[RMDB]
RNA sequence: GGGAACGACUCGAGUAGAGUCGAAAAGGUUAUGCUCGGCGCUCAAGAGUUGUAUCCACCGGGUAGUUUCCAACUCCGGCUGGUGUGAAGAAGGAGCCGUUCCACGCAGGACGCGAACAACACGAAGCAUCUAAGGGUGCUUCGGCACCCUUAGAUGAAAAGAAACAACAACAACAAC
Reactivity to DMS in 0.01 (KOAc 150mM, MgCl2 10mM, bicine 150mM(pH8.5), 24C), signal-to-noise 1, nucleotides 027 to 126: g000g010u010u010a030u010g000c250u000c000g010g000c020g030c000u000c020a190a210g000a010g010u000u030g010u000a160u000c020c010a140c130c000g020g010g020u010a020g010u010u000u000c000c000a090a160c080u000c010c060g010g000c140u000g010g060u010g000u010g010a100a130g010a150a080g000g000a050g000c030c000g010u010u020c030c070a080c100g000c040a030g030g010a090c000g030c050g000a050a060c030a020a060c110a160c080g000a080a120g020